[RMDB]
RNA sequence: GGGAACGACUCGAGUAGAGUCGAAAAGAUUGACGCGGACGCAAGGCCAGUUGAGGCGGGCUGCAACCUGCUCGAUAUGGGUCGAUUUACCCGUGCCGUGAUAGCCCGAAACCAUCACGCGGCGGUAUCGCUGCGAUUAGUUCGCUAAUCGCAGCGAAAAAGAAACAACAACAACAAC
Reactivity to DMS in 0.01 (KOAc 150mM, MgCl2 10mM, bicine 150mM(pH8.5), 24C), signal-to-noise 3, nucleotides 027 to 126: g010a090u010u010g030a100c050g010c060g000g010a060c100g000c170a070a170g020g000c040c010a080g030u000u010g010a090g040g010c040g010g000g010c020u000g000c250a100a160c030c020u010g000c020u000c010g010a080u010a090u000g000g010g000u000c060g020a170u010u000u020a110c040c020c010g020u000g020c060c030g010u000g020a070u000a050g000c020c020c110g000a140a090a130c080c050a030u010c030a030c040g020c060g010g010c000g010g010u010a100
Reactivity to 2A3 in 0.01 (KOAc 150mM, MgCl2 10mM, bicine 150mM(pH8.5), 24C), signal-to-noise 2, nucleotides 027 to 126: g010a000u070u130g030a020c030g000c050g050g020a020c010g010c080a130a000g070g000c000c010a000g010u030u070g060a060g040g080c070g020g000g030c010u130g020c010a060a040c010c010u000g030c040u040c030g030a020u030a150u270g100g000g000u010c050g020a070u070u100u140a110c030c020c010g040u100g060c020c000g020u000g040a030u050a040g020c010c010c020g030a090a020a030c030c010a070u050c010a000c000g000c020g030g010c100g020g030u060a090